[RMDB]
RNA sequence: GGGAACGACUCGAGUAGAGUCGAAAAGCUAUUUAUGACAGCAUCACUGAUCUGCUAGAUGUGUGCAUAAAGCACCUGAAGCGGUCCAACAAGAUUGACACAAGCGACUUUUCCCUUGAGGAGUGUCCACUAUGUCUCUCUUCGGAGAGACAUAGUGAAAAGAAACAACAACAACAAC
Reactivity to DMS in 0.01 (KOAc 150mM, MgCl2 10mM, bicine 150mM(pH8.5), 24C), signal-to-noise 5, nucleotides 027 to 126: g010c030u000a060u010u000u020a090u020g010a120c070a080g000c030a110u000c060a080c120u000g000a030u010c040u000g040c030u010a090g010a090u000g010u010g020u000g010c010a130u010a060a120a240g010c010a030c030c010u010g000a270a040g000c020g010g000u010c010c140a090a080c120a080a090g000a080u010u010g010a030c050a020c050a050a070g000c060g000a070c060u000u010u000u000c010c030c000u000u010g010a110g000g000a220g000u000g020u000c020
Reactivity to 2A3 in 0.01 (KOAc 150mM, MgCl2 10mM, bicine 150mM(pH8.5), 24C), signal-to-noise 5, nucleotides 027 to 126: g010c040u050a090u130u210u030a190u220g040a040c040a060g020c020a060u060c020a030c080u070g030a100u060c070u200g030c050u100a030g010a130u030g180u040g030u030g010c030a030u160a160a270a020g010c010a000c010c010u020g020a030a000g010c000g010g000u000c050c010a060a080c020a060a090g100a180u040u140g010a020c000a010c020a070a080g050c010g050a050c030u090u050u030u040c030c000c000u020u080g070a070g040g020a060g010u030g040u000c010